[RMDB]
RNA sequence: GGGAACGACUCGAGUAGAGUCGAAAACGAUGCUUGUGUAGGAAGUACCAUUAUAUCCGGAGGUGAAGCAGAUUCACAGACAUAAUUAACUCGAAUACCAUUGACGCCAAAUUCAGCGGGUUUCGAAAUACUACCAUUUCUUGACACUUCAGAAAAGCGGCUAUAUGUAGUUCGCUACAUAUAGCCGAAAAGAAACAACAACAACAAC
Reactivity to DMS in 0.01 (KOAc 150mM, MgCl2 10mM, bicine 150mM(pH8.5), 24C), signal-to-noise 1, nucleotides 027 to 156: c080g060a110u000g020c030u010u010g000u010g050u020a110g000g020a070a120g030u000a050c050c030a180u000u000a130u020a070u010c020c060g040g040a050g040g020u000g000a080a060g020c040a130g000a160u000u010c030a120c060a160g000a080c010a070u000a110a070u000u000a040a110c100u000c000g000a040a080u010a140c020c010a090u000u000g010a100c050g000c000c220a090a090a230u000u000c070a030g010c070g000g030g010u000u000u020c080g000a040a040a040u000a040c030u000a090c000c020a180u000u000u000c020u010u000g010a140c010a020c080u020u010c030a140g000a060a030a060a150g010
Reactivity to 2A3 in 0.01 (KOAc 150mM, MgCl2 10mM, bicine 150mM(pH8.5), 24C), signal-to-noise 2, nucleotides 027 to 156: c040g030a030u070g030c050u090u110g020u030g030u060a010g020g040a040a040g020u030a060c010c000a080u130u110a110u040a070u130c010c050g030g010a030g040g010u010g000a050a000g020c080a030g010a170u070u060c020a010c010a050g070a060c020a050u160a080a040u190u060a070a030c020u000c040g030a040a010u050a150c010c000a050u020u190g050a040c030g030c020c080a040a050a090u180u090c010a040g000c030g010g020g000u000u040u000c010g040a030a050a010u130a020c040u050a040c020c020a090u050u030u060c050u010u050g020a040c010a020c030u110u140c080a060g100a160a060a090a020g150
Overview:
The record gives the reactivity of an RNA of 207 nucleotides to DMS and 2A3. For 2A3, 1,792 sequencing reads were counted. It was measured as part of the RMDB library OK3TST. Values cover nucleotides 27 to 156.